The record gives the reactivity of an RNA of 207 nucleotides to 2A3 and DMS.
Values cover nucleotides 27 to 156.
RNA sequence: GGGAACGACUCGAGUAGAGUCGAAAAGUUUGCGGAUAAUCGGAUCAAUCAUGUUGUCCGUGACACAGUUGGGCUUGAUGAAGUCCCGGCGAUACAUGCACAACUUCGUGCAGGCGAGACGUUCGGAACAACGAUGCUAACUCCUCGCUGAGUCAGCGAUAGUGGUGUUUUUCGAAACACCACUAUCAAAAGAAACAACAACAACAAC
Reactivity to 2A3 in 0.01 (KOAc 150mM, MgCl2 10mM, bicine 150mM(pH8.5), 24C), signal-to-noise 9, nucleotides 027 to 156: g060u050u090u110g000c000g000g010a020u020a070a080u130c070g070g060a080u140c130a130a110u100c090a190u240g030u040u010g020u000c000c000g000u010g010a020c040a000c020a130g040u070u040g020g000g000c010u090u070g110a130u180g120a240a000g030u060c000c010c000g010g000c000g000a010u030a070c070a080u060g000c010a020c010a110a170c170u200u170c140g000u010g000c010a020g040g020c020g000a010g000a020c020g010u010u050c060g050g050a100a050c080a050a030c090g070a060u200g000c000u020a020a010c000u010c020c030u110c050g020c210u130g000a010g030u020c030a010g020c010
Reactivity to DMS in 0.01 (KOAc 150mM, MgCl2 10mM, bicine 150mM(pH8.5), 24C), signal-to-noise 4, nucleotides 027 to 156: g030u000u010u000g050c020g010g000a070u000a050a090u000c120g020g010a170u010c140a120a130u000c070a140u010g010u000u010g020u000c020c000g020u000g000a080c060a090c050a130g010u010u000g020g040g040c020u000u000g000a170u000g010a070a180g020u000c010c020c030g010g000c010g000a300u000a050c040a120u000g020c000a060c010a150a150c160u010u020c160g000u000g000c010a050g010g000c030g000a160g020a110c040g040u010u000c010g050g010a030a070c040a070a130c030g000a130u010g020c010u010a050a030c000u000c010c030u000c140g000c050u010g020a080g020u000c010a060g050c060